[RMDB]
RNA sequence: GGGAACGACUCGAGUAGAGUCGAAAACACCUCCAUACAUUUUACUGUUCCUGUUAUAAUAGUGACAGGUAUAGAAAAACGUAUUGUAUAGUUGUACAGUUCCUAUUAUGCGUAUCAAAGAUAAAACCAAAUCAGAUAUGUUCGCAUAUCUGAUUUGAAAAGAAACAACAACAACAAC
Reactivity to DMS in 0.01 (KOAc 150mM, MgCl2 10mM, bicine 150mM(pH8.5), 24C), signal-to-noise 5, nucleotides 027 to 126: c070a190c070c040u000c120c090a030u000a000c000a030u000u000u010u010a160c010u000g010u000u000c000c000u000g010u000u000a090u010a140a120u020a160g010u010g010a010c000a000g010g010u000a010u000a020g000a090a030a010a010a010c060g010u000a000u000u000g010u000a080u000a080g000u000u010g010u010a060c150a140g010u000u000c010c010u000a070u010u000a070u010g010c100g020u000a070u000c130a050a080a080g010a100u010a040a040a080a110c220
Reactivity to 2A3 in 0.01 (KOAc 150mM, MgCl2 10mM, bicine 150mM(pH8.5), 24C), signal-to-noise 3, nucleotides 027 to 126: c020a050c010c020u000c030c030a030u010a030c010a020u020u030u000u060a050c010u000g000u010u050c000c010u020g020u020u030a130u070a300a300u190a210g070u020g020a000c000a010g040g000u010a000u010a010g030a030a050a000a000a010c010g010u000a010u020u090g050u040a090u080a160g040u050u080g000u070a050c020a070g020u010u020c000c020u040a100u130u110a130u160g100c080g040u080a020u230c060a190a020a000g110a060u180a100a070a000a020c020
Conditions: 150 mM KOAc, 10 mM MgCl2 and 150 mM bicine (pH 8.5), 24 C. The record gives the reactivity of an RNA of 177 nucleotides to DMS and 2A3. For DMS, 5,019 sequencing reads were counted. Values are in units of 0.01, from 0 to 300, in steps of 10. The data come from the RNA Mapping Database (RMDB), library RFMREP. For 2A3 the reverse transcriptase was SuperScript II with manganese.